Source: RMDB library OK2TRN, as collected in RNAgym. This 177-nucleotide RNA was probed chemically with DMS and 2A3. 2A3 adducts were read by reverse transcription with SuperScript II with manganese.

[RMDB]
RNA sequence: GGGAACGACUCGAGUAGAGUCGAAAAUUCACGGCUGCGAGGGUUGGGACGUGAGGGAUGUCGAGAAGGGAGCGACACCUAGGGACCUUCUGUCCUCUGUCCUCCCGUCCACCCUGACUGUGGACUGUGAAUCUCCGUUAUUCGUAACGGAGAUUCAAAAAGAAACAACAACAACAAC
Reactivity to DMS in 0.01 (KOAc 150mM, MgCl2 10mM, bicine 150mM(pH8.5), 24C), signal-to-noise 4, nucleotides 027 to 126: u000u010c010a020c010g000g030c060u000g010c090g030a050g020g000g020u020u010g040g020g000a020c030g000u000g000a040g000g010g000a040u000g000u000c090g030a100g010a070a180g010g020g000a140g000c060g010a100c050a060c150c130u010a140g010g010g000a170c190c130u000u010c100u000g020u010c040c010u010c100u000g000u000c030c010u000c000c030c000g000u000c000c010a060c010c000c030u000g000a080c080u000g010u000g010g010a050c130u000g010
Reactivity to 2A3 in 0.01 (KOAc 150mM, MgCl2 10mM, bicine 150mM(pH8.5), 24C), signal-to-noise 2, nucleotides 027 to 126: u030u010c010a010c020g020g000c050u120g010c140g140a040g040g050g030u150u300g180g040g000a020c020g010u020g000a020g020g070g000a090u250g010u060c070g050a010g010a100a060g070g020g030a090g060c020g040a030c030a070c060c010u070a090g000g020g080a020c010c000u080u070c060u090g040u030c000c020u000c020u010g090u120c000c000u000c030c000c000g010u000c000c000a020c000c000c000u030g040a050c020u050g000u010g030g050a110c020u060g060